RNA sequence: GGGAACGACUCGAGUAGAGUCGAAAACUUCGACGGAAUCGUCAUCCGAAUUCUUUGUAACAAACCCCGAUAGGCCAAAUCGAUCCGCUGACUGGUUCUUACCUAUCGAGUUUCCGGUGUAGCGGACCUGGGUCGGAGGAUUCGUCCUCCGACCCAGAAAAGAAACAACAACAACAAC
Reactivity to 2A3 in 0.01 (KOAc 150mM, MgCl2 10mM, bicine 150mM(pH8.5), 24C), signal-to-noise 1, nucleotides 027 to 126: c070u150u120c070g100a020c000g000g030a000a010u040c000g070u170c090a000u000c000c010g040a000a000u070u040c000u000u060u260g060u240a120a000c020a040a130a050c000c000c000c000g060a070u030a070g000g160c000c000a040a060a040u170c160g040a040u000c100c000g000c000u000g040a000c000u000g060g000u110u140c000u070u000a120c030c050u070a070u120c030g000a070g000u000u100u000c050c040g000g000u070g000u020a000g000c000g000g000a020c010
The data come from the RNA Mapping Database (RMDB), library OK1LIB.
Structure probing data (2A3) for a 177-nucleotide construct.
Reactivities are rounded to 0.1 and cut off at 0 and 3.
For 2A3, 401 sequencing reads were counted.